Structure probing data (DMS) for a 177-nucleotide construct.
RNA sequence: GGGAACGACUCGAGUAGAGUCGAAAAAGUCAAGCAUGAGGCAUUGAACGAUGAUGAAAUGAUAUUCGAAGAGGAUUUUGAGCUGGAGGACUUGCCUGUAAUACAGAUUUGCAAGGGCAAAUCGAAAUGGUAAUCGAGCAUUCGUGCUCGAUUACCAAAAAGAAACAACAACAACAAC
Reactivity to DMS in 0.01 (KOAc 150mM, MgCl2 10mM, bicine 150mM(pH8.5), 24C), signal-to-noise 2, nucleotides 027 to 126: a030g010u010c050a080a040g020c030a100u000g030a160g010g020c030a020u000u000g000a100a090c110g050a070u000g000a100u010g010a070a090a050u000g030a130u010a070u000u000c080g000a060a110g000a130g000g000a080u000u010u020u000g010a090g010c030u000g000g020a080g000g030a030c070u000u000g000c010c000u010g000u000a070a150u000a230c180a120g000a030u000u010u000g020c020a210a100g010g010g010c010a020a000a030u030c020g000a030a030a140

The reactions ran in a buffer of 150 mM KOAc, 10 mM MgCl2 and 150 mM bicine (pH 8.5), at 24 C.